[RMDB]
RNA sequence: GGGAACGACUCGAGUAGAGUCGAAAACAACAAAACAAAACAUAGGGGAGUCAGGGUUCGGAGCUCCUCCCUGAACCUAGGGUAACACUGACUGUGGAGGGGAAAAGAAAGAAAACAAAACAAAACAAGGAUUAUGGUAGUUCGCUACCAUAAUCCUAAAAGAAACAACAACAACAAC
Reactivity to DMS in 0.01 (KOAc 150mM, MgCl2 10mM, bicine 150mM(pH8.5), 24C), signal-to-noise 2, nucleotides 027 to 126: c050a040a160c170a160a130a060a220c070a050a040a040a190c070a000u110a070g000g040g000g030a030g040u000c080a060g020g000g000u050u040c030g000g020a120g020c070u000c010c000u000c000c000c010u000g000a000a000c030c000u000a100g020g000g000u110a060a030c090a130c080u000g000a000c060u000g010u010g040g000a060g060g000g000g000a060a020a130a300g000a030a100a090g000a060a110a090a010c290a010a020a060a050c220a000a060a000a030c300a040
Reactivity to 2A3 in 0.01 (KOAc 150mM, MgCl2 10mM, bicine 150mM(pH8.5), 24C), signal-to-noise 2, nucleotides 027 to 126: c020a000a010c040a040a060a030a020c070a030a110a010a000c080a050u180a050g000g020g000g000a080g040u030c020a020g080g000g000u010u000c030g000g020a070g030c030u010c000c000u000c000c030c000u000g000a010a000c020c050u060a040g040g000g000u090a040a050c040a020c120u050g080a030c030u060g090u140g110g040a040g010g040g000g010a000a130a010a000g100a020a110a000g160a010a120a000a020c160a010a080a000a000c060a030a030a000a020c090a080

Structure probing data (DMS and 2A3) for a 177-nucleotide construct. For DMS the reverse transcriptase was MarathonRT. Values are in units of 0.01, from 0 to 300, in steps of 10. 2A3 adducts were read by reverse transcription with SuperScript II with manganese. For 2A3, 1,854 sequencing reads were counted. It was measured as part of the RMDB library OK1LIB.